The record gives the reactivity of an RNA of 177 nucleotides to DMS and 2A3. It was measured as part of the RMDB library OK2TRN. 2A3 adducts were read by reverse transcription with SuperScript II with manganese.
[RMDB]
RNA sequence: GGGAACGACUCGAGUAGAGUCGAAAACGGUUCCAGGCACUCACGCGUGAGGCUGCUGUUGCUGUGCUAUUGGAAGAGCUGCUGCUUCCUAUGCUGAGCCUCCACGCUAAGCCUCUGAGACGGGGCCGAAUCUGGUACUGUUCGCAGUACCAGAUUCAAAAGAAACAACAACAACAAC
Reactivity to DMS in 0.01 (KOAc 150mM, MgCl2 10mM, bicine 150mM(pH8.5), 24C), signal-to-noise 3, nucleotides 027 to 126: c110g010g010u000u010c000c030a130g000g030c090a100c130u010c110a110c170g000c020g010u000g010a020g000g020c010u000g030c090u010g000u000u000g030c060u010g030u000g010c040u010a180u000u030g020g010a040a020g000a100g020c080u010g010c090u010g000c010u000u010c010c000u000a060u000g010c040u010g000a070g010c010c010u000c050c080a000c040g000c030u000a100a130g010c000c010u000c070u000g000a160g000a140c130g000g000g000g000c050c110
Reactivity to 2A3 in 0.01 (KOAc 150mM, MgCl2 10mM, bicine 150mM(pH8.5), 24C), signal-to-noise 2, nucleotides 027 to 126: c030g010g020u040u050c020c000a090g050g050c030a010c040u150c030a080c110g000c020g050u010g000a010g070g000c030u050g030c000u080g160u290u230g080c100u110g050u100g080c000u060a020u200u170g030g040a030a050g010a050g050c140u290g000c080u130g000c000u110u000c000c000u040a040u050g020c010u040g040a000g000c000c000u030c150c030a010c000g000c010u010a020a020g010c000c010u000c020u020g080a070g010a020c070g000g000g000g000c000c000